[RMDB]
RNA sequence: GGGAACGACUCGAGUAGAGUCGAAAAGAACUUACGCUUCCAGAUUAUGUGAUAGCAAGACUAAUACACAAUGUACGCCGUGUGGUUCGGAUACCUUUACAUCUCACAAUAAUCAUUUACAGGCUUGUCUAAGUUGUAACGGAAGAUGUGAUAGUAAGUAGUGGUGGGAUUUCGAUCCCACCACUACAAAAGAAACAACAACAACAAC
Reactivity to 2A3 in 0.01 (KOAc 150mM, MgCl2 10mM, bicine 150mM(pH8.5), 24C), signal-to-noise 1, nucleotides 027 to 156: g010a000a000c040u090u130a060c100g000c010u000u020c000c000a020g040a290u010u080a100u230g070u050g130a150u130a090g000c080a100a000g020a000c000u110a090a130u120a160c060a000c000a000a240u040g000u010a000c030g160c080c080g060u010g030u110g000g030u000u110c010g010g010a020u050a090c000c010u020u050u140a020c070a160u090c010u020c010a020c020a010a070u130a010a090u000c000a050u000u000u000a000c010a040g000g100c000u040u020g040u150c100u140a000a170g070u060u120g020u020a020a080c060g010g000a060a040g010a090u040g060u000g010a030u030a060g000u000a120a000

Chemical mapping of a 207-nucleotide RNA with 2A3. Values are in units of 0.01, from 0 to 300, in steps of 10. For 2A3 the reverse transcriptase was SuperScript II with manganese. The RNA was probed in 150 mM KOAc, 10 mM MgCl2 and 150 mM bicine (pH 8.5) at 24 C. The 2A3 profile rests on 425 reads.